[RMDB]
The record gives the reactivity of an RNA of 177 nucleotides to DMS. The data come from the RNA Mapping Database (RMDB), library OK2TST. For DMS, 1,128 sequencing reads were counted. The RNA was probed in 150 mM KOAc, 10 mM MgCl2 and 150 mM bicine (pH 8.5) at 24 C.
RNA sequence: GGGAACGACUCGAGUAGAGUCGAAAAUUGUUUGCUAUACCCACUUUUCCACAACUGAGCUUACGGAUGUCUGUGGCUUGGAAGGCAAACUGUUCAAUCAACUGUCACUUUUAAUCUUUCUGAGCUCAUAAAGGUAGGGGUUCGCCCCUACCUUUAUAAAAGAAACAACAACAACAAC
Reactivity to DMS in 0.01 (KOAc 150mM, MgCl2 10mM, bicine 150mM(pH8.5), 24C), signal-to-noise 2, nucleotides 027 to 126: u010u000g000u000u000u000g000c020u000a170u010a110c040c020c020a170c200u010u000u000u010c020c010a060c190a160a140c090u020g010a030g020c030u010u010a090c140g010g030a120u000g010u000c130u030g000u000g000g010c190u000u000g010g000a060a120g000g020c020a010a060a050c040u010g020u000u000c070a080a120u000c150a030a090c090u000g010u000c040a040c040u000u000u000u010a080a160u020c040u000u000u000c110u000g010a060g000c070u000c020